[RMDB]
RNA sequence: GGGAACGACUCGAGUAGAGUCGAAAAGAUAUGGAUCGUGGCAUAGAGCAACAGCCCUGUUCGGAAACGAACAGGGACAUGCUCUGCCCGAUCCUAAGUCAAACCAGAUCGGUUCGCCGAUCUGGAACCUUACCAUGUGCUUCGGCACAUGGUAAGGAAAAGAAACAACAACAACAAC
Reactivity to 2A3 in 0.01 (KOAc 150mM, MgCl2 10mM, bicine 150mM(pH8.5), 24C), signal-to-noise 3, nucleotides 027 to 126: g030a010u070a040u150g010g000a000u010c030g200u300g050g000c080a130u230a300g000a000g020c100a050a130c060a200g000c020c010c000u000g010u020u020c010g010g000a070a050a060c000g010a020a010c000a000g020g010g000a000c000a020u070g010c000u000c000u000g010c010c030c000g000a000u000c000c020u010a000a000g000u010c030a050a020a150c020c000a010g010a000u000c000g000g120u080u120c300g050c130c000g000a010u000c010u000g000g000a000a010
Reactivity to DMS in 0.01 (KOAc 150mM, MgCl2 10mM, bicine 150mM(pH8.5), 24C), signal-to-noise 2, nucleotides 027 to 126: g000a070u000a290u010g020g010a010u000c000g010u050g020g010c000a280u030a040g000a030g020c020a030a090c260a220g000c000c000c000u000g010u000u020c000g010g010a080a090a150c010g020a000a000c010a010g000g000g010a000c050a100u000g010c010u000c000u000g000c010c000c000g000a010u000c000c020u000a000a060g030u010c010a080a120a250c040c000a010g040a000u000c000g000g000u000u020c300g020c010c020g000a010u010c010u000g010g000a010a050
The record gives the reactivity of an RNA of 177 nucleotides to 2A3 and DMS. The RNA was probed in 150 mM KOAc, 10 mM MgCl2 and 150 mM bicine (pH 8.5) at 24 C. Reactivities are given for positions 27 through 126. The data come from the RNA Mapping Database (RMDB), library TTRDES.